An RNA of 207 nucleotides, treated with 2A3 and DMS and read out base by base. High DMS reactivity at an A or C suggests that its Watson-Crick edge is free. DMS adducts were read by reverse transcription with MarathonRT. For DMS, 3,645 sequencing reads were counted.

[RMDB]
RNA sequence: GGGAACGACUCGAGUAGAGUCGAAAAGGGGAUGUUUUGGGAUUCGACAGGCGCAGACCCGCGCUGGUUGCGAUUCGUAGGUUACGUCUACGUUAAAACGUUAAACAGUUUAAAUUAACUGCAAACGAAAACUCAUACGCUGUAGCUGCUUAGUUCACUAAGAAAACUGGUUCGCCAGUUUUCUUAGAAAAGAAACAACAACAACAAC
Reactivity to 2A3 in 0.01 (KOAc 150mM, MgCl2 10mM, bicine 150mM(pH8.5), 24C), signal-to-noise 3, nucleotides 027 to 156: g030g000g000g000a040u050g080u090u080u060u080g070g040g010a050u080u070c010g040a030c020a050g020g010c010g000c010a020g060a140c000c040c030g010c010g000c030u050g000g040u060u110g020c040g030a070u030u070c010g000u010a020g010g030u080u030a020c010g020u000c020u010a010c000g000u010u020a000a060a020a010c010g000u000u030a090a110a010c030a010g000u010u020u100a190a300a150u110u090a070a000c000u010g030c060a110a050a030c030g080a080a000a050a040c060u080c070a070u120a100c030g010c030u040g030u050a030g020c040u050g000c020u050u030a030g010u060u050c030a030
Reactivity to DMS in 0.01 (KOAc 150mM, MgCl2 10mM, bicine 150mM(pH8.5), 24C), signal-to-noise 2, nucleotides 027 to 156: g010g000g000g020a070u000g010u010u000u000u000g000g000g000a130u000u000c020g000a150c040a120g000g020c000g010c040a150g000a130c040c040c060g020c040g030c030u000g010g000u000u000g000c060g000a210u020u000c020g040u020a040g010g050u010u000a080c080g040u000c000u000a000c000g020u000u010a030a060a060a110c030g000u000u000a070a120a070c010a030g010u000u010u000a090a120a170u000u010a030a020c000u010g000c010a150a070a100c060g000a100a080a070a070c070u000c050a110u020a100c120g030c030u010g030u000a110g040c020u000g000c030u010u000a090g000u000u000c050a220